Conditions: 150 mM KOAc, 10 mM MgCl2 and 150 mM bicine (pH 8.5), 24 C.
Structure probing data (DMS and 2A3) for a 207-nucleotide construct.
The DMS profile rests on 3,493 reads.
Source: RMDB library OK3TST, as collected in RNAgym.
The 2A3 profile rests on 3,439 reads.
RNA sequence: GGGAACGACUCGAGUAGAGUCGAAAAUAGAAAGGGCCUCUGUCACCCAGGGUGGAGUGCAGUGGCAUGAUCAUGGCUCACUGCAGCCUUGACCUCCCAGGCUCAAGCGAUCCUCCCACCUCAGCGUCCCAAAUAACUGAGACCACAAAUGUGCACCCUGAAUAAUCAUGUUCGCAUGAUUAUUCAGAAAAGAAACAACAACAACAAC
Reactivity to DMS in 0.01 (KOAc 150mM, MgCl2 10mM, bicine 150mM(pH8.5), 24C), signal-to-noise 2, nucleotides 027 to 156: u010a090g010a070a110a090g010g010g020c040c020u000c050u010g040u000c060a150c020c000c050a100g010g010g050u010g000g030a130g000u010g000c000a040g050u010g010g010c050a040u000g000a050u000c150a190u000g010g010c000u010c070a060c060u030g040c050a080g030c050c020u020u000g010a040c020c010u000c060c050c040a190g000g060c080u000c040a030a100g020c020g040a080u010c020c020u000c050c020c020a080c060c010u010c030a060g020c030g020u000c040c020c030a090a120a110u000a050a080c090u000g010a070g000a080c000c030a070c040a040a080a110u000g030u010g020c080a060c060c050
Reactivity to 2A3 in 0.01 (KOAc 150mM, MgCl2 10mM, bicine 150mM(pH8.5), 24C), signal-to-noise 4, nucleotides 027 to 156: u160a040g100a030a120a030g030g020g010c020c030u050c050u070g080u110c050a060c080c060c060a050g050g010g020u050g020g040a060g040u050g000c010a010g010u020g020g000c050a020u100g070a110u160c120a060u190g070g000c070u080c120a050c040u050g020c040a020g000c000c000u020u020g020a040c020c010u060c020c030c030a020g010g020c050u010c010a010a010g040c040g040a070u060c000c020u050c010c020c010a020c020c010u050c020a030g010c010g040u040c010c010c010a040a130a020u130a040a020c060u040g030a010g040a080c020c050a060c060a050a100a040u110g010u050g040c030a050c040c010